Chemical mapping of a 177-nucleotide RNA with DMS and 2A3.
Reactivities are given for positions 27 through 126.

RNA sequence: GGGAACGACUCGAGUAGAGUCGAAAAUUAAUUGUGGCUUAGCUUAUCACCCAUUCACCAAUUGUGGGUCUCACUGUGUAUGCGGGGCCAAAUUUGAAACAUCUGAUAGAAUGAGGAUACACAGGCAGAGAAUAGUCUCUUUCGAGAGACUAUUCUCAAAAGAAACAACAACAACAAC
Reactivity to DMS in 0.01 (KOAc 150mM, MgCl2 10mM, bicine 150mM(pH8.5), 24C), signal-to-noise 2, nucleotides 027 to 126: u010u010a050a130u010u000g030u020g010g010c010u000u000a120g040c050u010u000a080u000c080a130c010c010c010a020u010u000c090a120c110c110a050a130u010u000g020u000g000g040g000u000c050u010c040a060c050u000g020u000g010u020a050u000g000c060g000g020g000g010c010c010a040a060a060u000u000u010g010a130a090a080c100a040u000c120u010g000a070u020a090g000a050a040u000g000a120g010g000a040u010a010c060a020c040a060g000g000c210a160
Reactivity to 2A3 in 0.01 (KOAc 150mM, MgCl2 10mM, bicine 150mM(pH8.5), 24C), signal-to-noise 2, nucleotides 027 to 126: u040u020a000a100u050u050g120u050g100g000c010u050u040a050g030c030u080u080a050u140c010a080c010c040c000a010u110u060c050a030c030c000a020a080u140u120g080u080g080g000g020u020c000u010c000a040c010u010g010u000g030u070a010u090g080c050g020g010g010g020c000c000a000a040a000u140u050u060g070a030a030a030c020a060u030c060u130g010a040u030a050g090a150a060u040g020a010g120g040a000u000a010c000a000c010a040g100g000c060a050
It was measured as part of the RMDB library OK2TST. The RNA was probed in 150 mM KOAc, 10 mM MgCl2 and 150 mM bicine (pH 8.5) at 24 C.